RNA sequence: GGGAACGACUCGAGUAGAGUCGAAAAACACGUACAUCUAAUCGACAUGACUAUGCGUUAAAACCAUUUGGUAAAACUGUCUUAGAUCAUUUGAAAGACGGUGGUUAUGAUGUUAUUGCCAUCGGUAUGCAGAAACAGUCUUCGGACUGUUUCUGCAAAAAGAAACAACAACAACAAC
Reactivity to 2A3 in 0.01 (KOAc 150mM, MgCl2 10mM, bicine 150mM(pH8.5), 24C), signal-to-noise 2, nucleotides 027 to 126: a000c050a020c080g060u130a060c040a040u050c090u060a150a040u140c090g120a020c040a090u070g000a050c040u090a000u000g000c030g010u120u000a050a100a060a060c000c000a120u120u110u290g010g000u040a090a080a000a000c010u030g090u080c020u000u020a150g030a240u040c000a060u030u040u110g150a160a100a030g060a010c000g000g010u010g010g020u000u180a030u040g130a060u120g080u170u050a070u110u110g030c000c050a000u060c020g000g030u150a050
Reactivity to DMS in 0.01 (KOAc 150mM, MgCl2 10mM, bicine 150mM(pH8.5), 24C), signal-to-noise 1, nucleotides 027 to 126: a110c030a180c080g000u000a030c190a000u000c000u000a140a140u040c130g000a190c220a000u000g020a010c100u000a010u000g000c010g000u000u030a000a070a090a020c000c020a060u000u000u020g000g000u000a130a060a060a000c040u000g000u000c000u020u000a020g020a190u000c070a060u000u030u040g000a150a050a040g000a080c210g010g000u000g080g000u000u060a060u000g000a110u000g050u000u000a010u000u000g000c000c060a070u000c060g050g000u010a030
This 177-nucleotide RNA was probed chemically with 2A3 and DMS. The DMS profile rests on 1,072 reads. Conditions: 150 mM KOAc, 10 mM MgCl2 and 150 mM bicine (pH 8.5), 24 C. For DMS the reverse transcriptase was MarathonRT. Source: RMDB library OK1LIB, as collected in RNAgym.